[RMDB]
RNA sequence: GGGAACGACUCGAGUAGAGUCGAAAACAAACUAACUUCGGUUAGUUUGAAAGAACGCUCCAACGCGCAGAGCUCUCGCGAGAGCGCGAAUGCACAAAGAAAAAAGAUAAUCGUUCGCGAUUAUCAAUCUUACCAUUUUGUUCGCAAAAUGGUAAGAAAAAGAAACAACAACAACAAC
Reactivity to 2A3 in 0.01 (KOAc 150mM, MgCl2 10mM, bicine 150mM(pH8.5), 24C), signal-to-noise 2, nucleotides 027 to 126: c000a010a000a010c000u010a000a000c010u030u020c090g030g010u030u000a000g000u010u000u000g010a000a010a000g050a100a020c050g000c030u010c000c020a130a120c030g000c010g010c020a010g020a020g050c030u030c030u040c110g000c030g050a060g020a020g070c000g000c010g090a050a020u190g020c070a050c080a140a130a090g190a070a200a040a020a020a000g000a010u010a010a020u000c000g030u030u050c250g030c000g080a000u010u000a010u030c010a000a070
Reactivity to DMS in 0.01 (KOAc 150mM, MgCl2 10mM, bicine 150mM(pH8.5), 24C), signal-to-noise 3, nucleotides 027 to 126: c000a000a010a000c000u000a000a000c000u000u020c240g020g010u000u000a000g000u010u000u000g000a100a110a100g000a150a080c150g010c050u000c020c050a070a080c100g010c020g010c030a050g010a300g000c010u000c030u010c010g000c230g000a150g010a090g000c070g020c000g000a080a040u000g020c070a040c150a060a070a120g000a000a050a070a110a100a090g000a020u000a010a000u000c000g020u000u010c160g010c010g020a000u000u000a000u000c000a120a060
Overview:
The record gives the reactivity of an RNA of 177 nucleotides to 2A3 and DMS. The 2A3 profile rests on 2,100 reads. Conditions: 150 mM KOAc, 10 mM MgCl2 and 150 mM bicine (pH 8.5), 24 C. Source: RMDB library M2PK50, as collected in RNAgym.